[RMDB]
RNA sequence: GGGAACGACUCGAGUAGAGUCGAAAAGGGCGUCGGCGGCACGCAUGUGAUGUACGUGCUGCAUCACGCGGACAAGCCGUCGCUGUAUCACGGCCUGCCCGACAAUCCGUCGAUCAGCCCGAUGGUACACCUACGGACUAUUCGUAGUCCGUAGGUGAAAAGAAACAACAACAACAAC
Reactivity to 2A3 in 0.01 (KOAc 150mM, MgCl2 10mM, bicine 150mM(pH8.5), 24C), signal-to-noise 2, nucleotides 027 to 126: g020g020g000c020g000u030c010g000g000c010g020g000c060a010c170g030c050a070u290g010u020g000a010u010g000u010a040c140g200u160g130c110u010g000c010a000u010c000a000c030g030c010g010g000a010c010a010a040g000c000c010g030u040c060g000c020u020g070u100a140u200c030a000c000g010g000c000c000u000g000c020c020c000g010a000c010a010a060u070c020c030g010u000c000g000a020u070c040a010g020c010c000c000g010a030u060g050g030u080a050
Reactivity to DMS in 0.01 (KOAc 150mM, MgCl2 10mM, bicine 150mM(pH8.5), 24C), signal-to-noise 4, nucleotides 027 to 126: g020g020g050c030g000u000c010g010g000c010g000g010c300a160c110g010c190a080u010g010u010g010a010u000g020u000a020c060g030u000g030c160u000g020c000a000u000c010a010c020g010c010g010g000a020c050a030a090g010c000c010g010u000c080g040c160u010g010u010a080u020c080a040c020g010g010c030c020u000g010c020c000c010g000a110c140a160a110u000c040c020g000u000c000g000a020u010c090a190g000c030c010c000g010a050u000g000g010u000a070